[RMDB]
RNA sequence: GGGAACGACUCGAGUAGAGUCGAAAAGAUAUGGAGCCACUUAGGGAGCUCGGUAUCGGAAACGAUACAGAGCAUCGAUCUAAGGUGGCUCCUAAGUCAAACUGAGUCAUGUUCGCAUGACUCAGAAUCAAAUCGAAAAGUUCGCUUUUCGAUUUGAAAAAGAAACAACAACAACAAC
Reactivity to DMS in 0.01 (KOAc 150mM, MgCl2 10mM, bicine 150mM(pH8.5), 24C), signal-to-noise 4, nucleotides 027 to 126: g010a020u010a290u000g000g000a020g000c000c000a020c010u000u000a030g010g020g020a110g010c000u000c000g000g030u000a000u000c000g010g010a100a060a120c010g010a010u000a010c000a040g000a020g010c000a260u000c230g010a100u000c010u000a030a040g030g020u000g010g000c000u000c000c000u000a000a060g000u010c010a090a120a300c010u000g010a030g000u000c000a010u000g010u000u020c250g020c010a010u000g000a020c000u000c000a000g010a070a100
Reactivity to 2A3 in 0.01 (KOAc 150mM, MgCl2 10mM, bicine 150mM(pH8.5), 24C), signal-to-noise 3, nucleotides 027 to 126: g000a010u040a020u100g010g000a000g000c010c000a010c020u000u000a040g120g050g150a120g080c010u000c040g020g010u010a000u010c000g000g020a040a030a010c010g000a000u010a010c010a010g020a010g040c010a110u300c170g170a140u080c020u040a040a050g200g030u010g000g030c000u000c000c000u000a000a000g000u020c010a000a050a110c020u010g000a000g000u000c000a000u000g060u050u150c300g010c190a000u010g000a010c000u000c000a000g000a000a020
Overview:
An RNA of 177 nucleotides, treated with DMS and 2A3 and read out base by base. The 2A3 profile rests on 6,115 reads. Conditions: 150 mM KOAc, 10 mM MgCl2 and 150 mM bicine (pH 8.5), 24 C. For DMS, 4,603 sequencing reads were counted.